[RMDB]
RNA sequence: GGGAACGACUCGAGUAGAGUCGAAAAGUCGCCGCAUCUACAUCAACGCCCAGCGCGGGCGAGGGAGGCGUCCUACGGGGGUGACCCAUUCGCCGGCAUGGUAGAGGACUGCAAGAUUGCCCCGACGGGCAGUAGUCGUAUUCGUACGACUACUGCCAAAAGAAACAACAACAACAAC
Reactivity to DMS in 0.01 (KOAc 150mM, MgCl2 10mM, bicine 150mM(pH8.5), 24C), signal-to-noise 2, nucleotides 027 to 126: g030u000c030g030c020c080g020c080a070u000c030u000a070c060a070u000c060a060a140c070g040c060c010c030a170g010c210g030c140g020g020g010c010g010a020g010g020g010a160g000g000c050g030u010c000c010u020a140c170g020g000g000g010g000u000g030a190c070c010c000a120u010u000c060g010c010c000g020g020c060a100u000g000g020u000a080g010a110g010g000a050c070u000g010c030a020a060g000a090u000u000g030c010c000c040c010g030a080c150g010
Reactivity to 2A3 in 0.01 (KOAc 150mM, MgCl2 10mM, bicine 150mM(pH8.5), 24C), signal-to-noise 1, nucleotides 027 to 126: g020u020c000g030c090c010g010c020a020u030c030u100a080c010a070u100c110a160a000c090g000c010c000c000a040g120c280g030c120g140g030g000c000g010a030g000g030g010a130g010g000c020g040u010c000c000u030a120c110g170g000g010g020g000u060g120a140c020c000c010a050u070u080c020g020c030c020g050g000c060a080u060g000g040u050a030g040a090g050g010a040c050u100g000c020a020a120g030a200u110u080g030c000c000c000c000g060a070c010g020
Structure probing data (DMS and 2A3) for a 177-nucleotide construct. In probing experiments dimethyl sulfate is read out at A N1 and C N3, which are open when not base-paired. 2A3 adducts were read by reverse transcription with SuperScript II with manganese. For DMS, 1,623 sequencing reads were counted. Values are in units of 0.01, from 0 to 300, in steps of 10. The reactions ran in a buffer of 150 mM KOAc, 10 mM MgCl2 and 150 mM bicine (pH 8.5), at 24 C. The data come from the RNA Mapping Database (RMDB), library OK2TRN. High 2A3 reactivity points to a flexible backbone, as in loops and unpaired stretches. DMS adducts were read by reverse transcription with MarathonRT.